Structure probing data (2A3 and DMS) for a 177-nucleotide construct. The RNA was probed in 150 mM KOAc, 10 mM MgCl2 and 150 mM bicine (pH 8.5) at 24 C. Reactivities are given for positions 27 through 126. For DMS the reverse transcriptase was MarathonRT. Source: RMDB library OK1LIB, as collected in RNAgym.
RNA sequence: GGGAACGACUCGAGUAGAGUCGAAAAUUAUGAUAUCCAAAUUGAUGACUGGAUGACAGUGUUUGGUGACCCGAACUAUGCUAUGACGGCAUUAUUUAGUUCUACAGGAUCAAAUAGUUUAUUGAAACUUAGGGAGAUCGUUCGCGAUCUCCCUAAGAAAAGAAACAACAACAACAAC
Reactivity to 2A3 in 0.01 (KOAc 150mM, MgCl2 10mM, bicine 150mM(pH8.5), 24C), signal-to-noise 1, nucleotides 027 to 126: u140u060a200u100g060a010u010a030u130c000c050a000a000a000u210u150g120a300u230g110a120c000u000g060g000a110u160g080a020c000a000g050u000g010u040u000u000g050g000u100g000a050c000c000c000g000a000a000c000u010a060u000g000c000u040a040u300g120a030c020g000g000c000a000u040u010a170u100u250u070a060g000u030u010c000u000a000c040a090g180g060a060u170c000a050a050a050u050a300g070u090u060u090a060u090u040g160a020a080a080
Reactivity to DMS in 0.01 (KOAc 150mM, MgCl2 10mM, bicine 150mM(pH8.5), 24C), signal-to-noise 1, nucleotides 027 to 126: u000u010a010u000g000a020u030a020u010c000c000a000a110a050u060u020g020a080u010g000a140c050u020g000g000a090u000g000a170c150a000g000u000g080u000u000u010g000g020u000g010a160c070c020c030g000a050a070c040u010a010u010g010c050u000a050u050g000a170c220g000g000c060a100u000u000a070u000u040u000a070g000u000u000c000u050a110c050a060g000g070a010u010c070a010a010a220u010a070g010u000u000u020a100u000u000g040a100a070a050